Source: RMDB library TTRDEL, as collected in RNAgym. This 177-nucleotide RNA was probed chemically with 2A3 and DMS.
[RMDB]
RNA sequence: GGGAACGACUCGAGUAGAGUCGAAAAGAUAUGGACUCUAUGAAGACAUGUGACCUGGUCGGAAACGACCAAGGUCGAAUUGGAGAGUCCUAAGUCAAACGAAUCGCGUGUUCGCACGCGAUUCGAACUCUCAUGUUCUGUUCGCAGAACAUGAGAGAAAAGAAACAACAACAACAAC
Reactivity to 2A3 in 0.01 (KOAc 150mM, MgCl2 10mM, bicine 150mM(pH8.5), 24C), signal-to-noise 2, nucleotides 027 to 126: g010a010u020a030u110g010g020a010c010u000c000u000a140u230g180a100a070g250a090c170a230u270g070u090g160a000c010c000u000g000g000u010c000g020g000a010a040a000c000g000a000c020c010a030a030g000g000u000c020g050a170a140u040u030g070g060a020g010a000g040u000c000c000u010a020a000g000u000c020a090a010a120c030g000a000a000u000c000g000c010g000u020g080u130u130c300g020c110a000c000g000c000g000a000u000u000c010g000a000a000
Reactivity to DMS in 0.01 (KOAc 150mM, MgCl2 10mM, bicine 150mM(pH8.5), 24C), signal-to-noise 2, nucleotides 027 to 126: g010a010u000a050u010g010g010a010c000u000c000u010a080u000g000a100a110g000a160c140a110u020g020u000g010a020c000c010u000g000g010u000c010g000g000a020a010a050c000g000a000c000c000a020a030g030g010u000c000g000a050a040u000u000g000g010a050g000a020g000u000c000c000u020a000a060g000u000c040a100a100a230c010g030a000a010u000c010g000c010g020u000g000u000u010c220g020c000a010c010g010c000g000a000u000u000c000g000a040a100

Notes:
Conditions: 150 mM KOAc, 10 mM MgCl2 and 150 mM bicine (pH 8.5), 24 C. High DMS reactivity at an A or C suggests that its Watson-Crick edge is free.